[RMDB]
RNA sequence: GGGAACGACUCGAGUAGAGUCGAAAAGCGGGUAACUUCGGUUACCCGCAAAGACGCGUCUCGUCGCGUCGCCGUCGCGUCGCGGGGCGUCGCGUCGCGAGAAAAGGACGAAGUUCGCUUCGUCCAAUCAAUCAUAACCGUUCGCGGUUAUGAUUGAAAAAGAAACAACAACAACAAC
Reactivity to DMS in 0.01 (KOAc 150mM, MgCl2 10mM, bicine 150mM(pH8.5), 24C), signal-to-noise 4, nucleotides 027 to 126: g020c000g000g000g000u000a000a000c000u000u000c170g030g010u000u000a010c000c000c000g010c000a000a010a060g000a040c030g000c040g010u000c070u000c070g000u000c010g020c000g010u000c010g010c010c220g010u010c090g020c010g010u000c050g020c000g010g010g000g010c190g010u000c020g000c000g030u000c030g010c110g000a080g000a060a070a110a110g000g010a020c000g000a020a010g010u010u010c240g020c000u000u000c000g020u000c000c000a040a030
Reactivity to 2A3 in 0.01 (KOAc 150mM, MgCl2 10mM, bicine 150mM(pH8.5), 24C), signal-to-noise 3, nucleotides 027 to 126: g000c010g020g000g000u030a010a000c000u040u080c190g070g000u020u010a000c000c000c000g000c000a000a010a000g000a000c010g020c010g050u000c010u010c060g300u030c000g020c000g010u020c010g010c010c040g250u120c160g000c000g060u040c040g010c000g000g010g030g030c040g070u070c010g000c000g000u020c030g000c030g020a090g040a010a130a020a040g010g000a000c000g010a010a000g020u030u090c160g050c080u000u000c000g000u000c000c000a000a020
This 177-nucleotide RNA was probed chemically with DMS and 2A3.
DMS adducts were read by reverse transcription with MarathonRT.